[RMDB]
RNA sequence: GGGAACGACUCGAGUAGAGUCGAAAAGCACGUCCGGAAAGACCCGUGCGAACACUUGAGCUCCGGCUUGUCCGCUCUUGUGGAUUAGGACGUUCUAGCUCCGGCUUGGCCGCUAGUUCGUCCGAAACGCUGAUUACGCGUUCGCGCGUAAUCAGCGAAAAGAAACAACAACAACAAC
Reactivity to 2A3 in 0.01 (KOAc 150mM, MgCl2 10mM, bicine 150mM(pH8.5), 24C), signal-to-noise 3, nucleotides 027 to 126: g020c010a000c020g020u050c060c010g040g070a030a170a120g160a170c000c020c000g000u000g000c020g040a050a010c020a000c010u010u020g030a000g010c040u050c120c050g010g020c030u170u230g090u060c020c040g000c000u000c000u010u030g020u020g060g030a100u030u160a090g000g000a000c000g000u000u030c000u000a010g000c030u070c100c030g110g060c100u050u250g130g040c030c010g000c000u000a000g000u000u010c000g000u020c010c000g000a000a000a000
Reactivity to DMS in 0.01 (KOAc 150mM, MgCl2 10mM, bicine 150mM(pH8.5), 24C), signal-to-noise 2, nucleotides 027 to 126: g010c030a040c050g010u020c070c050g050g000a030a240a070g020a210c130c070c060g010u000g000c040g040a050a210c010a090c080u000u000g000a040g000c100u000c270c040g000g000c110u050u000g040u010c000c000g010c000u000c020u040u000g000u000g110g080a060u080u030a100g010g000a000c000g000u000u000c000u000a010g000c000u040c020c070g000g070c140u070u050g000g000c100c140g000c000u000a000g100u000u000c010g020u000c000c010g000a000a050a140